Structure probing data (2A3 and DMS) for a 177-nucleotide construct.
For 2A3 the reverse transcriptase was SuperScript II with manganese.
For 2A3, 726 sequencing reads were counted.
The RNA was probed in 150 mM KOAc, 10 mM MgCl2 and 150 mM bicine (pH 8.5) at 24 C.
It was measured as part of the RMDB library RFM100.
[RMDB]
RNA sequence: GGGAACGACUCGAGUAGAGUCGAAAAGUGCGUAACAGCUCACUCACCGAGGUUAUUUGCCUCCAAGAUGGAAGAGGCUAAAGCCAGUUACCGAUACAUUAGACCACCGAAAGGUGAUGUGGUAGGGUUCCGCACCCUUAUUCGUAAGGGUGCGGAAAAAAGAAACAACAACAACAAC
Reactivity to 2A3 in 0.01 (KOAc 150mM, MgCl2 10mM, bicine 150mM(pH8.5), 24C), signal-to-noise 2, nucleotides 027 to 126: g050u060g030c000g050u080a190a070c010a120g020c000u000c010a000c000u030c000a030c000c000g010a060g000g000u130u060a220u260u260u150g000c040c000u000c020c000a050a000g070a080u280g120g080a170a140g000a010g020g000c070u110a000a020a000g000c070c050a000g010u050u080a010c000c030g000a020u040a090c010a030u120u160a040g100a070c000c000a040c100c000g110a070a040a030g060g000u050g010a030u040g000u000g010g050u100a050g010g000g000
Reactivity to DMS in 0.01 (KOAc 150mM, MgCl2 10mM, bicine 150mM(pH8.5), 24C), signal-to-noise 2, nucleotides 027 to 126: g050u030g000c070g080u030a030a060c140a200g030c020u000c100a060c030u040c090a110c120c060g000a060g050g040u000u000a080u000u060u050g000c080c010u030c020c130a110a200g000a190u030g010g000a210a030g000a050g000g000c000u000a040a080a140g050c010c010a000g000u010u000a160c010c070g010a050u000a230c030a040u010u000a220g000a290c160c020a020c050c000g010a100a080a090g000g040u000g000a020u000g000u000g000g000u000a110g000g010g020